Source information
This 177-nucleotide RNA was probed chemically with 2A3 and DMS. The data come from the RNA Mapping Database (RMDB), library M2PK50. The reactions ran in a buffer of 150 mM KOAc, 10 mM MgCl2 and 150 mM bicine (pH 8.5), at 24 C.
RNA sequence: GGGAACGACUCGAGUAGAGUCGAAAAACCUCAGUCUUCGGACUGAGGUGAGCGGAGCAUGGUGGCCGUGGGAACUCCUCCUUGGUGACAAGGGCCCACGGCGUGCGGCACGCUUCGGCGUGCCGAAGUCAAGUAGAUUAUUCGUAAUCUACUUGACAAAAGAAACAACAACAACAAC
Reactivity to 2A3 in 0.01 (KOAc 150mM, MgCl2 10mM, bicine 150mM(pH8.5), 24C), signal-to-noise 4, nucleotides 027 to 126: a000c000c000u000c000a010g010u000c010u010u130c190g160g000a000c000u000g000a000g000g000u010g000a030g020c070g040g040a050g030c120a140u160g140g090u140g280g000c000c000g010u010g000g000g010a060a060c050u050c030c000u020c000c000u020u020g030g000u090g020a040c010a020a000g010g000g010c000c010c000a000c010g000g000c000g000u030g010c000g000g000c010a010c000g000c000u030u040c130g080g000c020g020u010g000c000c020g020a020a000
Reactivity to DMS in 0.01 (KOAc 150mM, MgCl2 10mM, bicine 150mM(pH8.5), 24C), signal-to-noise 5, nucleotides 027 to 126: a020c000c000u000c000a000g010u000c000u000u010c200g030g000a010c000u000g000a000g000g010u000g000a030g010c080g010g010a070g010c110a090u010g010g010u010g000g010c000c000g020u000g000g000g000a090a050c060u010c040c030u000c010c000u000u000g000g000u020g000a230c030a010a010g000g000g010c000c000c000a010c010g000g010c010g020u010g020c030g000g000c000a020c010g020c000u000u000c060g020g010c000g040u000g000c000c000g000a010a040